[RMDB]
RNA sequence: GGGAACGACUCGAGUAGAGUCGAAAAGAAAGCCUUGCCUGGUCAUGCAGACAACAUCAGAAUGUCCCUACGGGUUUGUGUAGUUAGUAGGGCCAUUUUGUGUUGUCAGCAGGACCAGUGCACUUAAAGGAGAUCUGACUUUCGAGUCAGAUCUCCUAAAAGAAACAACAACAACAAC
Reactivity to 2A3 in 0.01 (KOAc 150mM, MgCl2 10mM, bicine 150mM(pH8.5), 24C), signal-to-noise 1, nucleotides 027 to 126: g070a040a020a040g170c000c000u000u000g000c000c000u000g000g000u000c000a000u020g000c010a000g000a030c000a000a000c000a050u300c010a000g000a000a000u000g000u000c000c000c000u000a000c000g080g100g040u160u300u020g200u070g000u020a190g110u200u110a040g000u040a000g020g000g000c000c000a000u000u000u000u000g050u000g000u000u000g000u000c000a000g020c000a000g000g000a000c000c040a000g010u000g010c000a000c000u070u110a130a000

Overview: An RNA of 177 nucleotides, treated with 2A3 and read out base by base. Reactivities are given for positions 27 through 126. The data come from the RNA Mapping Database (RMDB), library RFM100.